[RMDB]
RNA sequence: GGGAACGACUCGAGUAGAGUCGAAAAGAUAUGGACCCAUGCAUUACGCAAGAGAGGUCAGUACCUAUCGGAAACGAUAGGUACUGACUACCCACCUCUUGAACUACGUAAUGUGGGUCCUAAGUCACUUGUAGAAAGUCUUCGGACUUUCUACAAGAAAAGAAACAACAACAACAAC
Reactivity to DMS in 0.01 (KOAc 150mM, MgCl2 10mM, bicine 150mM(pH8.5), 24C), signal-to-noise 2, nucleotides 027 to 126: g000a050u030a300u020g000g000a000c000c000c020a110u000g010c020a010u000u000a030c010g010c000a040a030g000a020g040a190g010g020u000c020a000g020u000a020c000c000u000a010u010c000g000g000a200a060a300c010g010a010u000a000g010g020u000a000c000u000g020a020c020u000a040c120c070c140a300c120c010u010c000u000u000g000a060a120c170u010a300c000g010u000a000a000u010g010u000g040g010g000u000c010c000u000a000a090g040u010c030a300